Structure probing data (DMS and 2A3) for a 177-nucleotide construct. The DMS profile rests on 4,399 reads. Source: RMDB library OK2TRN, as collected in RNAgym. 2A3 adducts were read by reverse transcription with SuperScript II with manganese. Values cover nucleotides 27 to 126. Conditions: 150 mM KOAc, 10 mM MgCl2 and 150 mM bicine (pH 8.5), 24 C.
RNA sequence: GGGAACGACUCGAGUAGAGUCGAAAAUAUUGAUUUUGGCCUCAAAGUAGUAGCGAUGCUAGACACAGAUAGCCGCUGCAUUCGCUAUAAUAAGAAGUCAGUUUCAUAUGGAGAGAGGAUCCAAAGAUCCGAAUGAACUAUUCGUAGUUCAUUCGGAAAAAGAAACAACAACAACAAC
Reactivity to DMS in 0.01 (KOAc 150mM, MgCl2 10mM, bicine 150mM(pH8.5), 24C), signal-to-noise 5, nucleotides 027 to 126: u010a040u010u000g030a020u000u010u000u010g020g000c020c030u000c020a040a160a200g010u000a160g020u000a010g000c000g010a030u000g000c010u000a100g000a060c060a100c160a190g010a130u010a050g000c050c040g020c120u000g000c010a030u010u010c020g010c020u000a000u000a040a080u010a070a240g000a020a010g010u000c010a020g000u000u000u000c010a030u000a040u010g010g020a100g000a100g010a070g020g010a090u000c030c050a080a100a140g000a110
Reactivity to 2A3 in 0.01 (KOAc 150mM, MgCl2 10mM, bicine 150mM(pH8.5), 24C), signal-to-noise 3, nucleotides 027 to 126: u090a020u040u090g050a000u040u020u020u030g000g000c010c010u050c040a120a160a010g070u120a070g000u010a000g010c000g010a030u020g000c050u110a030g050a080c080a010c010a120g200a300u130a030g100c090c040g040c030u000g000c000a000u100u150c000g000c010u010a020u010a100a080u080a060a040g020a020a000g010u000c010a000g010u040u030u000c060a050u090a080u120g040g020a040g010a030g000a040g100g040a040u040c010c000a080a030a040g090a080